[RMDB]
An RNA of 207 nucleotides, treated with 2A3 and DMS and read out base by base.
The reactions ran in a buffer of 150 mM KOAc, 10 mM MgCl2 and 150 mM bicine (pH 8.5), at 24 C.
RNA sequence: GGGAACGACUCGAGUAGAGUCGAAAAGCGUACUACCAAGCUUUUGACGCUCAAGAUGAGUGGCAAGGUUUCUCCCAAAUAGGAGAAACUGAUGACCCAUUGAGAGCGAUAAGCUUGGUAUCGCAAACUAUUGCCUCACUUCGGUGAGGCAAUAGAAGAUUUCACCUUACUUCGGUAAGGUGAAAUCAAAAGAAACAACAACAACAAC
Reactivity to 2A3 in 0.01 (KOAc 150mM, MgCl2 10mM, bicine 150mM(pH8.5), 24C), signal-to-noise 4, nucleotides 027 to 156: g010c010g050u090a060c050u010a010c010c000a010a000g000c010u110u100u080u080g140a090c020g000c000u000c010a000a050g030a050u060g050a040g300u210g090g020c020a020a030g010g000u000u000u010c030u030c030c020c010a200a300a130u300a120g000g000a000g000a000a000a000c000u000g000a020u260g040a050c000c010c000a000u010u070g010a040g010a000g020c000g010a020u000a010a000g000c010u000u000g010g010u020a000u030c000g000c000a020a080a000c000u000a000u000u000g020c000c010u000c000a000c010u020u100c280g130g000u010g000a010g020g000c000a000a000u000a000g000a010a000
Reactivity to DMS in 0.01 (KOAc 150mM, MgCl2 10mM, bicine 150mM(pH8.5), 24C), signal-to-noise 1, nucleotides 027 to 156: g000c040g000u040a050c130u000a030c000c010a050a090g040c010u000u020u000u000g050a190c000g000c000u000c000a040a300g010a010u000g010a020g010u000g020g050c050a210a300g020g010u000u000u000c020u010c010c000c000a110a130a170u000a040g010g000a080g010a010a000a010c010u000g010a090u000g030a190c010c020c000a000u000u010g000a300g010a030g030c000g020a110u000a010a050g010c000u000u000g060g010u010a000u000c010g000c020a110a140a240c000u000a000u010u010g010c000c000u000c030a020c010u010u000c300g050g000u000g000a000g000g000c000a000a000u000a000g000a080a100